An RNA of 177 nucleotides, treated with DMS and 2A3 and read out base by base. DMS adducts were read by reverse transcription with MarathonRT. The RNA was probed in 150 mM KOAc, 10 mM MgCl2 and 150 mM bicine (pH 8.5) at 24 C.
[RMDB]
RNA sequence: GGGAACGACUCGAGUAGAGUCGAAAAGAAGAGCUGAAGAUGCUCUUAUCUGCGAUGGUAGAUAAUAAUCAGACUAUCAUGGACAGCAUUGUGACUGGGACAGGUAAACUUGGUCUCAUCAUCAAUAGCAUUCCUAAGCAUUCGUGCUUAGGAAUGCAAAAGAAACAACAACAACAAC
Reactivity to DMS in 0.01 (KOAc 150mM, MgCl2 10mM, bicine 150mM(pH8.5), 24C), signal-to-noise 3, nucleotides 027 to 126: g020a030a020g000a020g020c000u000g010a140a080g020a090u040g030c010u000c020u000u000a080u010c010u000g020c090g020a070u000g000g040u020a050g000a070u000a100a130u010a100a090u020c130a190g000a060c010u010a010u000c000a030u010g020g040a230c090a050g000c250a090u000u010g050u010g000a030c300u000g020g000g010a020c030a070g000g020u000a090a090a080c130u010u040g010g020u010c010u010c000a050u000c050a050u010c090a040a030u000a110
Reactivity to 2A3 in 0.01 (KOAc 150mM, MgCl2 10mM, bicine 150mM(pH8.5), 24C), signal-to-noise 2, nucleotides 027 to 126: g130a000a000g020a000g000c040u100g070a110a000g100a150u110g000c000u000c000u000u010a110u020c000u030g020c040g050a020u040g000g050u000a000g020a090u100a190a060u190a070a060u250c040a000g100a140c010u010a020u040c010a000u060g040g000a070c010a030g020c020a060u050u140g020u030g000a030c110u020g000g000g010a000c000a030g060g080u150a210a110a170c060u060u100g160g000u020c010u000c010a030u020c000a020u020c000a000a090u040a080
Source information: Reactivities are given for positions 27 through 126. The 2A3 profile rests on 2,235 reads.